Description:
This 177-nucleotide RNA was probed chemically with DMS. The reactions ran in a buffer of 150 mM KOAc, 10 mM MgCl2 and 150 mM bicine (pH 8.5), at 24 C. The data come from the RNA Mapping Database (RMDB), library OK2TST.
[RMDB]
RNA sequence: GGGAACGACUCGAGUAGAGUCGAAAAGUUCGCUUUCAUUAGGUUCGAUAACUUCCUUCAGCGCGUGUUGGAGCGUAAUGAGGAAGCUGCUAUCCGAGCAUUGGAGGAUACGCGUACGAGUGUGACGAUUUAGUCGGAGCUUCGGCUCCGACUAAAUAAAAGAAACAACAACAACAAC
Reactivity to DMS in 0.01 (KOAc 150mM, MgCl2 10mM, bicine 150mM(pH8.5), 24C), signal-to-noise 1, nucleotides 027 to 126: g000u000u000c030g000c040u000u000u000c030a070u010u000a090g010g020u000u000c010g010a040u010a050a150c000u000u010c000c000u010u000c110a250g010c070g020c030g000u000g000u010u000g000g010a180g010c000g030u000a050a140u000g020a060g000g020a030a000g020c180u000g030c160u000a040u000c120c050g000a070g030c020a100u020u000g000g020a040g000g000a050u000a030c180g010c090g020u000a010c050g010a130g000u000g000u000g010a150c140g010